The data come from the RNA Mapping Database (RMDB), library OK2TST. This 177-nucleotide RNA was probed chemically with DMS. The DMS profile rests on 780 reads.
RNA sequence: GGGAACGACUCGAGUAGAGUCGAAAACAGGCGAAUGCUCGCGCGGAGGCCCGCCCGACGGUAGUGGCGUUAAAGGCUGCCCGCGUGGGUGGCUUCUUGGUCAAGAUGGCUGGUGUGGCAGCGCUGACUUGCGCUAUCCUUUCGAGGAUAGCGCAAGAAAAGAAACAACAACAACAAC
Reactivity to DMS in 0.01 (KOAc 150mM, MgCl2 10mM, bicine 150mM(pH8.5), 24C), signal-to-noise 1, nucleotides 027 to 126: c060a180g020g020c050g010a150a060u030g000c020u020c040g010c010g050c010g040g010a300g000g000c070c000c020g040c040c030c040g050a090c190g030g000u000a010g010u000g010g050c060g000u040u010a070a060a220g020g000c000u000g000c220c000c030g010c000g030u010g000g000g060u010g000g020c010u000u010c020u000u000g000g000u010c020a070a070g010a060u000g030g010c050u000g020g000u000g010u000g000g000c020a060g030c030g110c040u000g000a110